[RMDB]
RNA sequence: GGGAACGACUCGAGUAGAGUCGAAAAAAGUAUUGCUAUAGUUAAGGUUGCGCUUGCCUAUUUAGGCAUCCUUCUCAGGAUGGCGCGUUGCAGUCCAACAAGAUCCAGGGACUGUACAGAAUUUUCCAAAACGCGUCGAGGUUCGCCUCGACGCGAAUCCGUUAAUAAGGUUCGCCUUAUUAACGGAAAAAGAAACAACAACAACAAC
Reactivity to 2A3 in 0.01 (KOAc 150mM, MgCl2 10mM, bicine 150mM(pH8.5), 24C), signal-to-noise 2, nucleotides 027 to 156: a000a000g220u180a120u160u210g040c020u050a010u110a140g090u090u140a110a010g030g080u060u070g010c050g000c050u040u030g000c010c010u110a180u080u150u220a100g000g000c000a020u050c000c000u100u060c110u040c120a000g020g070a030u040g010g020c070g010c030g030u030u030g000c000a000g000u000c050c000a090a070c010a210a110g010a280u110c070c120a030g010g000g000a000c010u010g010u000a010c030a030g110a130a060u110u060u080u000c050c010a000a020a060a080c000g000c000g020u000c010g000a000g030g030u060u090c150g170c000c000u030c000g010a000c000g000c000g000a010a000
Reactivity to DMS in 0.01 (KOAc 150mM, MgCl2 10mM, bicine 150mM(pH8.5), 24C), signal-to-noise 1, nucleotides 027 to 156: a050a140g020u000a080u000u010g000c020u000a160u000a100g010u010u000a130a080g010g020u010u000g020c030g020c000u000u010g020c020c030u000a220u000u000u010a110g030g010c000a070u010c000c000u000u010c090u010c180a130g030g000a100u010g030g010c010g040c040g000u000u010g030c000a040g000u000c020c010a090a170c060a070a110g010a120u010c110c070a200g020g020g020a030c000u000g000u010a090c110a110g020a080a120u000u010u010u010c030c000a060a050a120a150c030g000c000g040u000c000g020a010g070g030u000u020c300g010c000c000u000c050g040a030c070g020c000g000a010a020